[RMDB]
RNA sequence: GGGAACGACUCGAGUAGAGUCGAAAAACAACUUGGAGUUGCAGGUAGGCGGCAAGUGAGUUCAUCCCCAUGAGCAUAGACGGGCUAUGUGAUUGGGGUGAACGAACGCAGCCCCCCUGCAGCUUCACGAUUUAUGAGUCUUCGGACUCAUAAAUCGAAAAGAAACAACAACAACAAC
Reactivity to DMS in 0.01 (KOAc 150mM, MgCl2 10mM, bicine 150mM(pH8.5), 24C), signal-to-noise 2, nucleotides 027 to 126: a130c070a040a110c110u000u030g030g010a030g020u000u000g000c000a020g010g000u020a050g040g030c120g030g020c010a050a100g020u000g030a300g010u000u000c000a010u010c000c000c000c000a010u000g000a300g000c010a010u000a010g020a280c300g080g000g000c010u000a010u000g000u010g000a300u000u000g000g030g000g010u000g000a000a000c010g000a110a040c030g000c090a300g000c000c000c030c110c010c000u000g020c050a000g000c000u020u000c000a040
Reactivity to 2A3 in 0.01 (KOAc 150mM, MgCl2 10mM, bicine 150mM(pH8.5), 24C), signal-to-noise 1, nucleotides 027 to 126: a030c020a000a030c060u030u000g020g000a000g010u010u010g000c010a020g000g000u140a070g030g100c110g000g000c030a090a100g020u010g010a000g000u030u000c010a140u300c000c020c000c000a000u000g010a000g020c010a010u010a010g070a060c150g090g090g150c010u000a020u030g060u040g000a000u000u000g000g000g000g000u000g010a010a000c000g000a000a000c010g030c060a010g000c000c010c000c000c010c000u000g000c020a010g010c010u000u010c000a000